[RMDB]
RNA sequence: GGGAACGACUCGAGUAGAGUCGAAAAAGGAUAGGAUUCGUCCUAUCCUACACCAAAACCUCCUGGCGGUGCGGCGCCGGCCGCGCCGGGAAGGCCGCCUUAUUGGUAGCUGGUUCGCCAGCUACAAUCAAAAAUGCACAUUCGUGUGCAUUUUUGAAAAAGAAACAACAACAACAAC
Reactivity to DMS in 0.01 (KOAc 150mM, MgCl2 10mM, bicine 150mM(pH8.5), 24C), signal-to-noise 2, nucleotides 027 to 126: a020g000g000a030u000a000g000g010a030u000u020c200g020u000c000c000u000a010u000c000c000u000a030c100a190c010c020a030a070a120a300c040c040u000c030c030u020g010g010c010g010g020u000g020c000g020g010c010g010c110c190g010g000c190c100g030c020g010c010c010g000g000g000a120a100g000g010c080c060g020c040c030u000u010a080u010u000g000g010u010a010g010c000u000g000g000u000u010c160g010c000c000a000g000c000u000a010c000a030a080
Reactivity to 2A3 in 0.01 (KOAc 150mM, MgCl2 10mM, bicine 150mM(pH8.5), 24C), signal-to-noise 1, nucleotides 027 to 126: a000g020g000a000u010a000g000g000a030u000u100c160g040u030c030c000u000a000u010c000c000u010a010c030a040c010c000a030a060a060a150c020c020u020c000c050u040g030g010c030g000g090u050g120c020g000g060c080g070c120c110g120g040c060c070g040c000g040c000c030g040g040g000a020a030g180g000c010c020g000c000c000u080u120a180u120u100g090g000u000a000g000c000u040g040g000u040u040c190g020c080c010a000g000c010u000a010c000a000a010

The record gives the reactivity of an RNA of 177 nucleotides to DMS and 2A3. The data come from the RNA Mapping Database (RMDB), library M2PK50. Conditions: 150 mM KOAc, 10 mM MgCl2 and 150 mM bicine (pH 8.5), 24 C. Reactivities are rounded to 0.1 and cut off at 0 and 3. DMS adducts were read by reverse transcription with MarathonRT.